[RMDB]
This 177-nucleotide RNA was probed chemically with DMS and 2A3. The reactions ran in a buffer of 150 mM KOAc, 10 mM MgCl2 and 150 mM bicine (pH 8.5), at 24 C. Values cover nucleotides 27 to 126.

RNA sequence: GGGAACGACUCGAGUAGAGUCGAAAACGCGCACGGUCAACACAACGGUGGCUCCCAGCUCGGCCAACCCGGCGGCAAUGGCCUUACCCAGGCCGCGAUUUGCGCCGGUGACCAUCGCGGUGCGGCCACGCUAAUUACGCUUCGGCGUAAUUAGCGUAAAAGAAACAACAACAACAAC
Reactivity to DMS in 0.01 (KOAc 150mM, MgCl2 10mM, bicine 150mM(pH8.5), 24C), signal-to-noise 3, nucleotides 027 to 126: c040g040c060g020c110a060c060g020g000u000c100a130a100c090a060c110a050a110c030g000g000u020g000g000c140u020c030c010c000a070g010c040u000c040g020g020c010c030a100a090c130c030c010g000g000c010g010g020c030a010a030u000g000g030c010c000u000u070a100c080c050c040a160g000g040c000c000g020c180g030a040u010u020u000g000c040g030c000c000g020g060u020g000a090c040c060a090u010c020g010c190g010g020u000g000c100g000g010c080c050
Reactivity to 2A3 in 0.01 (KOAc 150mM, MgCl2 10mM, bicine 150mM(pH8.5), 24C), signal-to-noise 4, nucleotides 027 to 126: c070g030c010g020c010a020c100g030g040u060c060a130a050c020a070c010a150a100c060g050g000u010g030g000c020u060c010c010c000a020g030c080u110c040g020g000c000c000a030a040c040c000c010g020g000c010g060g020c030a020a060u060g010g000c000c000u030u090a140c060c040c000a000g010g000c000c010g000c060g100a110u040u020u100g020c010g000c000c000g000g000u020g010a010c000c000a030u080c030g020c050g030g010u040g000c030g010g000c010c000

The data come from the RNA Mapping Database (RMDB), library OK1LIB. For 2A3 the reverse transcriptase was SuperScript II with manganese. In probing experiments dimethyl sulfate is read out at A N1 and C N3, which are open when not base-paired.